RNA sequence: GGGAACGACUCGAGUAGAGUCGAAAACUGAAGCUCAAGGUGCUUGAGAGUUCAAGGCCACUGUACGAGCGUGAGGCAAACAAAGUGGUUAUUUCAAAGUCAGGCCUGUUCAGUGCCGGUGAGCAGGCUCGCCUAAAAACUUCGGUUUUUAGGCGAGAAAAGAAACAACAACAACAAC
Reactivity to DMS in 0.01 (KOAc 150mM, MgCl2 10mM, bicine 150mM(pH8.5), 24C), signal-to-noise 4, nucleotides 027 to 126: c060u010g000a110a130g000c020u000c040a100a140g000g020u010g010c050u000u000g000a050g000a100g010u010u000c070a100a090g010g000c040c010a020c020u000g020u000a110c230g000a120g010c040g020u000g020a130g010g010c040a060a060a090c140a050a080a040g010u000g000g010u000u010a090u010u010u000c100a060a080a130g000u010c130a070g000g000c010c000u000g010u000u010c020a030g000u010g010c030c060g000g000u010g000a020g000c000a020g000g010
Reactivity to 2A3 in 0.01 (KOAc 150mM, MgCl2 10mM, bicine 150mM(pH8.5), 24C), signal-to-noise 2, nucleotides 027 to 126: c010u000g040a040a020g020c010u020c050a050a000g030g090u110g090c030u050u070g050a070g020a060g130u060u040c050a070a000g050g000c030c020a040c040u110g000u160a060c100g050a050g040c050g030u140g070a070g140g000c070a110a110a090c010a060a170a010g060u050g050g030u110u070a120u090u280u100c110a110a050a060g050u060c070a040g000g070c000c000u020g040u010u050c020a020g030u030g080c030c010g020g150u030g020a010g000c010a020g020g000

This 177-nucleotide RNA was probed chemically with DMS and 2A3. High 2A3 reactivity points to a flexible backbone, as in loops and unpaired stretches. Conditions: 150 mM KOAc, 10 mM MgCl2 and 150 mM bicine (pH 8.5), 24 C. The 2A3 profile rests on 1,591 reads.